The data come from the RNA Mapping Database (RMDB), library M2PK90.
The record gives the reactivity of an RNA of 177 nucleotides to 2A3 and DMS.
For 2A3, 2,112 sequencing reads were counted.
The reactions ran in a buffer of 150 mM KOAc, 10 mM MgCl2 and 150 mM bicine (pH 8.5), at 24 C.
In probing experiments dimethyl sulfate is read out at A N1 and C N3, which are open when not base-paired.
[RMDB]
RNA sequence: GGGAACGACUCGAGUAGAGUCGAAAAGAAAAGCUGGUGUGAAAAGGGCCAGCAACGUCAGAACAAAAUCGCAAGGUGUAACAAAGAACGCCAAAACUGACGAAUGCGAAAUCAAAAAUGAAAAAAAUCAAGUACUAAUGUUCGCAUUAGUACUUGAAAAAGAAACAACAACAACAAC
Reactivity to 2A3 in 0.01 (KOAc 150mM, MgCl2 10mM, bicine 150mM(pH8.5), 24C), signal-to-noise 2, nucleotides 027 to 126: g010a000a080a010a000g010c010u000g020g020u070g010u070g090a100a060a020a040g100g050g000c010c010a000g010c000a000a000c000g000u000c000a000g070a150a070c090a090a100a070a110u080c020g040c100a080a000g000g000u010g010u080a110a020c030a050a190a020g050a050a000c010g000c000c020a050a030a010a040c010u000g000a000c000g030a010a000u050g010c020g050a040a070a030u100c030a010a100a140a060a090u260g140a100a080a030a000a000a000a120
Reactivity to DMS in 0.01 (KOAc 150mM, MgCl2 10mM, bicine 150mM(pH8.5), 24C), signal-to-noise 2, nucleotides 027 to 126: g030a060a030a080a210g010c030u000g000g000u000g000u000g020a040a030a070a100g010g030g000c040c010a040g000c010a060a060c040g030u020c010a060g000a090a100c170a110a020a100a080u000c090g040c130a090a130g000g020u000g010u010a080a070c190a120a100a180g000a080a000c000g010c000c020a020a030a130a160c020u010g000a010c000g010a110a030u000g010c020g000a060a090a070u010c210a010a020a070a080a070u050g020a030a000a000a080a070a060a110